[RMDB]
RNA sequence: GGGAACGACUCGAGUAGAGUCGAAAAGGAUGCUCGUUCGCGAGCAUCCACUGAGAUAGCCACUAUAUAGAUUAAGUCUUCCUACUCGAGACAGGAUGUCUAUGCUCCUGGCCUUCGGGCCAGGAAAGAGGGCUAUAACAUUCGUGUUAUAGCCCUCAAAAGAAACAACAACAACAAC
Reactivity to 2A3 in 0.01 (KOAc 150mM, MgCl2 10mM, bicine 150mM(pH8.5), 24C), signal-to-noise 2, nucleotides 027 to 126: g000g010a000u000g000c000u000c000g020u050u060c210g010c000g120a010g010c000a000u000c000c000a000c000u020g050a020g000a020u060a020g050c050c020a060c040u030a040u020a030u060a300g120a150u070u140a100a040g010u000c010u020u020c030c000u010a020c010u000c020g030a020g020a040c040a050g160g030a120u170g040u010c020u030a090u090g080c010u010c000c020u000g010g000c000c000u010u030c200g080g000g000c000c000a000g000g000a000a000a000
Reactivity to DMS in 0.01 (KOAc 150mM, MgCl2 10mM, bicine 150mM(pH8.5), 24C), signal-to-noise 1, nucleotides 027 to 126: g020g000a000u000g000c000u000c010g040u030u010c160g040c010g010a030g000c000a020u000c000c000a020c050u040g000a150g000a060u010a130g020c050c070a110c070u000a050u010a140u000a000g020a010u000u000a070a150g010u010c010u000u000c060c040u000a030c020u000c010g010a040g020a090c030a060g010g000a120u010g010u000c030u020a080u000g000c220u000c000c000u030g000g010c000c000u000u010c200g010g010g000c010c000a000g000g000a000a030a050